Chemical mapping of a 207-nucleotide RNA with 2A3 and DMS. The 2A3 profile rests on 1,063 reads. Values are in units of 0.01, from 0 to 300, in steps of 10. For DMS the reverse transcriptase was MarathonRT.
[RMDB]
RNA sequence: GGGAACGACUCGAGUAGAGUCGAAAAGCGACAGCAUCGUCGAACGCCUGAGCGCAUCGACAAAUAUCCUGCAAAGCGAAUCGGCCGUGACCCAGCGCCGAGCCAUGCGCCUGGCGCCGCGCCGAGAGUUCGAAGCGAACAUGUACGCGGUGGAUCGUCUUCCUUUACGGUUCGCCGUAAAGGAAGAAAAAGAAACAACAACAACAAC
Reactivity to 2A3 in 0.01 (KOAc 150mM, MgCl2 10mM, bicine 150mM(pH8.5), 24C), signal-to-noise 2, nucleotides 027 to 156: g010c010g040a010c040a030g020c020a060u160c090g070u020c050g010a100a090c030g010c000c050u180g140a060g000c070g000c050a060u040c040g020a000c030a020a130a010u180a030u060c030c030u040g000c040a070a010a040g020c010g030a010a060u020c020g000g030c120c010g070u070g090a130c050c030c000a030g000c010g000c000c010g010a020g000c000c000a190u300g000c110g020c020c050u010g000g010c020g000c010c010g000c020g000c000c000g020a010g020a020g020u070u070c040g040a100a000g060c020g090a060a000c020a080u120g020u080a050c000g000c010g020g000u030g000g030a060u010c030g000
Reactivity to DMS in 0.01 (KOAc 150mM, MgCl2 10mM, bicine 150mM(pH8.5), 24C), signal-to-noise 1, nucleotides 027 to 156: g020c000g050a100c000a090g000c060a300u000c160g040u000c000g020a040a060c030g000c000c040u000g010a220g060c070g020c000a270u010c020g000a090c000a010a060a130u020a130u000c140c020u000g000c090a090a040a180g010c000g010a070a180u010c030g000g020c000c040g030u000g020a150c030c010c080a090g010c010g000c000c020g020a010g040c000c030a090u000g020c030g050c020c000u000g000g070c030g040c000c000g000c050g010c030c000g000a030g000a120g000u000u000c020g000a100a160g010c080g010a090a130c030a140u000g060u000a040c050g020c040g030g000u000g030g010a130u000c030g030
Record summary: The reactions ran in a buffer of 150 mM KOAc, 10 mM MgCl2 and 150 mM bicine (pH 8.5), at 24 C. The DMS profile rests on 1,676 reads.